[RMDB]
RNA sequence: GGGAACGACUCGAGUAGAGUCGAAAAGAUUAUGUGGGAGAGGCGCCCUUUCGUUUCGUCGGAUAAUUAAUUGCCAGUCGCUGGCUUUAGCGAUAUUGAUGUCAUCUGUAGCGAUGACUAUGCUACGUUAAGGUAUGAUCCGGAUACCGCCGGUAAACAUACUAGGUCCGUUCGCGGACCUAGUAUGAAAAGAAACAACAACAACAAC
Reactivity to DMS in 0.01 (KOAc 150mM, MgCl2 10mM, bicine 150mM(pH8.5), 24C), signal-to-noise 1, nucleotides 027 to 156: g020a130u020u000a050u000g000u000g020g040g010a110g030a130g020g020c040g010c060c030c050u000u010u000c040g020u000u020u000c060g050u020c060g020g010a140u010a090a060u000u000a030a100u000u000g010c000c040a160g040u000c040g030c020u020g080g010c090u000u010u000a020g010c000g010a110u000a000u000u000g000a230u000g040u000c010a020u000c010u000g020u000a150g030c100g000a040u000g010a040c050u010a020u010g010c000u000a030c020g000u020u000a060a030g010g040u010a060u000g000a100u020c070c030g050g010a190u010a070c070c030g000c020c000g000g010u000a050a130a240
Reactivity to 2A3 in 0.01 (KOAc 150mM, MgCl2 10mM, bicine 150mM(pH8.5), 24C), signal-to-noise 2, nucleotides 027 to 156: g040a060u120u110a100u220g080u090g040g070g020a120g010a040g050g000c000g030c000c040c000u020u110u070c060g010u010u030u040c030g020u040c000g000g000a010u100a120a040u200u130a050a060u180u080g020c000c000a050g080u110c030g040c120u000g030g030c050u090u070u050a000g000c010g010a040u000a070u020u140g080a060u040g000u010c000a000u000c010u060g180u150a030g130c020g040a000u000g020a020c020u040a040u080g030c020u040a020c020g020u040u040a070a030g000g000u050a040u090g080a060u030c010c020g030g010a030u060a070c000c000g010c000c000g000g020u030a020a020a000
This 207-nucleotide RNA was probed chemically with DMS and 2A3. The reactions ran in a buffer of 150 mM KOAc, 10 mM MgCl2 and 150 mM bicine (pH 8.5), at 24 C. High DMS reactivity at an A or C suggests that its Watson-Crick edge is free.